RNA sequence: GGGAACGACUCGAGUAGAGUCGAAAAUUAUACAGCUGAAACAACUCAGGAUGCUAUGAGAGAAUUUUAUCCACAUUUGAAUACAGGGAUGUCAUUUAUUCGUGGUGUUGGUUAUCCGAAACAGCAAGCAAAGUGGGUAUUUCGAUACCCACUUUGCAAAAGAAACAACAACAACAAC
Reactivity to DMS in 0.01 (KOAc 150mM, MgCl2 10mM, bicine 150mM(pH8.5), 24C), signal-to-noise 1, nucleotides 027 to 126: u010u030a110u000a130c020a030g050c050u000g010a070a030a090c150a110a180c130u030c000a120g020g000a030u010g000c070u000a050u000g000a150g030a160g000a090a100u010u000u000u000a000u000c000c000a030c020a030u020u010u060g020a060a030u020a020c010a060g000g080g000a220u000g000u010c100a020u000u030u000a110u030u000c000g120u000g000g000u000g020u000u000g010g020u000u030a050u000c010c050g000a070a140a050c050a020g000c300a140a120
Reactivity to 2A3 in 0.01 (KOAc 150mM, MgCl2 10mM, bicine 150mM(pH8.5), 24C), signal-to-noise 2, nucleotides 027 to 126: u180u100a070u080a120c050a070g020c040u050g050a010a070a000c020a080a030c030u000c040a050g030g000a080u020g000c030u060a120u080g100a060g050a050g030a210a080u160u020u170u120a060u110c000c000a100c000a150u030u070u170g040a090a000u000a010c000a100g040g000g100a080u100g010u020c000a030u070u040u030a050u040u070c010g010u040g030g000u120g100u130u010g050g060u140u090a040u020c000c000g000a010a100a010c000a010g120c070a050a050

Chemical mapping of a 177-nucleotide RNA with DMS and 2A3.
2A3 is a SHAPE reagent: it acylates the 2'-hydroxyl of flexible nucleotides of all four kinds.
The 2A3 profile rests on 795 reads.